[RMDB]
RNA sequence: GGGAACGACUCGAGUAGAGUCGAAAAUCACACUUGAGAGCUGUCUCCAUCAUGGCACAAGGGGGCUAGAAUAUUCAUACUCCCCAUACCAGUCAGUUAUUGAUGAAACCUCUCCUGGCACGGUAUAACUCACUGCGCACUUCGGUGCGCAGUGAGUAAAAGAAACAACAACAACAAC
Reactivity to 2A3 in 0.01 (KOAc 150mM, MgCl2 10mM, bicine 150mM(pH8.5), 24C), signal-to-noise 1, nucleotides 027 to 126: u040c000a000c000a000c040u000u130g130a040g000a000g030c150u000g000u140c000u010c140c000a030u000c020a000u020g050g000c220a100c030a240a070g000g070g000g030g000c070u020a090g090a140a090u080a080u290u200c100a030u080a140c010u000c030c000c000c000a010u030a100c160c000a040g000u020c050a030g000u210u110a080u190u150g010a000u060g000a020a000a000c000c000u000c000u000c000c000u050g000g000c000a140c190g080g000u020a080u040a010